[RMDB]
RNA sequence: GGGAACGACUCGAGUAGAGUCGAAAACGCGCUGGCGGUGGCCGAGGUCUGGGACAACGGGAAACCGGUCCGGGAAGCGCUGGCCGCCGAUAUCCCGUUGGCGGUCGAUCACUUCCGGUACUUCGCCUACUUGGUGCAUUUUCGAAUGCACCAAGUAAAAAGAAACAACAACAACAAC
Reactivity to 2A3 in 0.01 (KOAc 150mM, MgCl2 10mM, bicine 150mM(pH8.5), 24C), signal-to-noise 5, nucleotides 027 to 126: c060g010c010g010c040u040g020g010c010g030g020u030g030g000c030c010g040a050g010g060u060c070u130g050g040g030a020c010a160a070c120g010g010g000a030a030a040c010c000g010g000u010c010c010g010g020g010a090a030g030c050g000c110u060g000g010c000c000g000c000c010g000a000u010a040u030c000c010c020g000u010u010g000g020c010g000g030u000c020g040a110u070c010a050c050u060u020c030c000g030g010u030a080c020u040u070c030g040c030c000
Reactivity to DMS in 0.01 (KOAc 150mM, MgCl2 10mM, bicine 150mM(pH8.5), 24C), signal-to-noise 3, nucleotides 027 to 126: c090g010c070g000c050u030g000g000c060g000g000u010g000g000c040c030g000a100g000g000u010c030u010g020g000g010a090c030a120a130c010g000g000g000a090a090a130c070c020g000g000u000c010c000g000g020g010a050a050g020c090g030c130u030g010g000c000c030g020c010c000g020a020u000a070u010c030c010c020g000u000u000g010g000c000g000g000u010c000g000a030u020c070a090c000u000u000c030c000g030g000u030a060c010u010u010c030g010c030c020
Structure probing data (2A3 and DMS) for a 177-nucleotide construct. The data come from the RNA Mapping Database (RMDB), library OK1LIB. High 2A3 reactivity points to a flexible backbone, as in loops and unpaired stretches. 2A3 adducts were read by reverse transcription with SuperScript II with manganese.